[RMDB]
RNA sequence: GGGAACGACUCGAGUAGAGUCGAAAAGAUAUGGAUUGUCCCUUGGAACAAUGAUGUGGACUCGGAAACGAGUCCAUUGAGUUCUUAGGGAGCAAUCCUAAGUCAAAGAGUUCGUUCGCGAACUCAACUUUUUAUAAGUCUUCGGACUUAUAAAAAGAAAAGAAACAACAACAACAAC
Reactivity to DMS in 0.01 (KOAc 150mM, MgCl2 10mM, bicine 150mM(pH8.5), 24C), signal-to-noise 5, nucleotides 027 to 126: g010a050u010a300u000g000g010a000u000u000g010u000c000c000c010u000u000g000g000a020a010c000a210a190u020g010a110u010g000u010g000g000a000c010u010c000g000g000a120a110a200c000g010a010g010u000c000c000a000u000u000g000a110g000u000u000c000u000u000a020g010g010g010a040g010c000a010a000u000c000c000u000a030a120g010u000c050a150a130a210g010a020g000u000u000c000g030u010u020c270g020c020g010a000a020c000u000c000a040a080
Reactivity to 2A3 in 0.01 (KOAc 150mM, MgCl2 10mM, bicine 150mM(pH8.5), 24C), signal-to-noise 3, nucleotides 027 to 126: g020a030u110a050u220g020g000a000u020u000g020u060c000c000c010u010u030g060g000a050a000c070a260a300u150g020a040u140g090u010g020g010a020c010u000c000g030g000a120a090a040c010g000a000g000u050c000c010a000u000u000g000a000g000u010u000c010u000u000a010g000g010g010a090g000c000a010a000u000c000c000u000a130a020g070u030c070a190a100a110g000a000g000u000u020c010g020u100u140c300g030c020g170a000a000c000u000c020a020a000